[RMDB]
RNA sequence: GGGAACGACUCGAGUAGAGUCGAAAAGAUAUGGAAUCUGUUCUUUUGACGAGCUACCCAUCGGAAACGAUGGAUGCUCGAUAAGAACUGAUUCCUAAGUCAAAAGGUUACCGGUUCGCCGGUAACCCCUGGAUAAAAUCUUCGGAUUUUAUCCAGGAAAAGAAACAACAACAACAAC
Reactivity to DMS in 0.01 (KOAc 150mM, MgCl2 10mM, bicine 150mM(pH8.5), 24C), signal-to-noise 2, nucleotides 027 to 126: g020a020u000a300u010g000g000a030a000u000c000u000g000u000u000c000u000u010u010u000g000a230c140g000a020g020c000u000a130c170c000c000a020u010c020g000g010a090a040a120c000g030a010u010g010g000a000u000g010c000u010c000g010a040u010a020a020g010a030a010c000u000g000a010u000u000c000c000u000a000a130g010u000c020a090a090a100a160g010g010u000u000a000c010c000g000g010u000u020c300g030c000c010g000g000u000a000a000c000c020
Reactivity to 2A3 in 0.01 (KOAc 150mM, MgCl2 10mM, bicine 150mM(pH8.5), 24C), signal-to-noise 2, nucleotides 027 to 126: g010a020u040a020u090g010g000a020a010u000c030u070g000u040u000c010u070u160u150u300g300a300c240g010a010g010c010u040a090c010c000c000a010u000c000g010g040a040a020a010c010g000a010u020g010g000a000u000g000c000u000c010g010a020u120a020a000g000a000a000c000u010g010a010u030u000c010c000u000a040a010g020u040c020a060a000a100a180g010g000u000u000a010c010c000g020g040u080u080c300g050c020c020g000g010u000a000a010c010c000
Structure probing data (DMS and 2A3) for a 177-nucleotide construct. For 2A3, 3,937 sequencing reads were counted. The RNA was probed in 150 mM KOAc, 10 mM MgCl2 and 150 mM bicine (pH 8.5) at 24 C.